Structure probing data (2A3) for a 207-nucleotide construct. As a SHAPE reagent, 2A3 marks flexible, mostly unpaired nucleotides at the ribose 2'-OH. The reactions ran in a buffer of 150 mM KOAc, 10 mM MgCl2 and 150 mM bicine (pH 8.5), at 24 C.
RNA sequence: GGGAACGACUCGAGUAGAGUCGAAAAAGCACGGUUUUUGAGGACGCAUUUUGUCCGUGCGGUAAUGCCCUCCUUUACACUUUCUCGCAUGGUGCGGGAGUGUGGAGAGGAAACAAAAGCUAGUCUUGAUAGGCGGUUAACUUCGGUUAACCGCCAACAGCGAGAAAAACUUCGGUUUUUCUCGCUGAAAAGAAACAACAACAACAAC
Reactivity to 2A3 in 0.01 (KOAc 150mM, MgCl2 10mM, bicine 150mM(pH8.5), 24C), signal-to-noise 1, nucleotides 027 to 156: a000g030c000a000c000g010g020u010u010u010u010u010g020a070g000g000a010c040g050c090a110u000u000u000u010g000u010c000c000g000u000g000c180g030g030u190a060a130u300g080c000c000c020u030c020c000u030u110u130a020c000a000c010u180u280u110c000u040c030g000c010a100u120g280g040u300g170c000g000g000g020a010g010u000g050u000g000g000a060g010a000g000g030a020a020a000c010a000a000a000a000g090c000u010a040g020u010c000u010u000g070a100u040a160g000g000c010g000g000u010u000a000a000c000u000u010c080g000g000u020u000a000a000c010c000g000c000c000a000a010